The data come from the RNA Mapping Database (RMDB), library M2PK50. This 177-nucleotide RNA was probed chemically with DMS and 2A3. The RNA was probed in 150 mM KOAc, 10 mM MgCl2 and 150 mM bicine (pH 8.5) at 24 C. For 2A3 the reverse transcriptase was SuperScript II with manganese. For 2A3, 1,191 sequencing reads were counted.

[RMDB]
RNA sequence: GGGAACGACUCGAGUAGAGUCGAAAAGGAUGCUCGUUCGCGAGCAUCCACUGAGAUAGCCACUAUAAAGAUUAAGUCUUCCUACUCGUGACAGGAUGUCUAUGCUCCUGGCCUUCGGGCCAGGAAACCACUAUGGUCUGUUCGCAGACCAUAGUGGAAAAGAAACAACAACAACAAC
Reactivity to DMS in 0.01 (KOAc 150mM, MgCl2 10mM, bicine 150mM(pH8.5), 24C), signal-to-noise 2, nucleotides 027 to 126: g010g040a000u010g000c000u000c000g050u010u010c220g060c030g040a020g000c010a030u000c000c000a060c160u010g000a120g000a040u000a080g000c050c030a060c080u010a110u000a060a050a180g000a070u000u000a070a030g000u010c010u000u000c030c000u000a050c090u030c090g000u020g000a060c060a100g020g000a040u010g000u000c060u010a080u050g000c180u000c000c000u010g020g000c000c000u000u010c240g000g010g030c010c000a000g000g000a000a030a070
Reactivity to 2A3 in 0.01 (KOAc 150mM, MgCl2 10mM, bicine 150mM(pH8.5), 24C), signal-to-noise 1, nucleotides 027 to 126: g000g000a010u020g000c000u020c000g020u060u050c260g000c000g050a000g020c000a000u000c000c000a000c000u010g020a030g020a020u060a040g050c050c040a030c050u120a040u150a260a200a040g100a070u090u250a080a080g040u000c020u040u000c000c000u000a080c040u030c060g100u060g030a010c010a060g110g090a180u090g030u000c000u050a140u080g080c000u040c000c000u010g000g000c000c020u010u030c150g060g000g000c030c000a010g000g000a000a000a000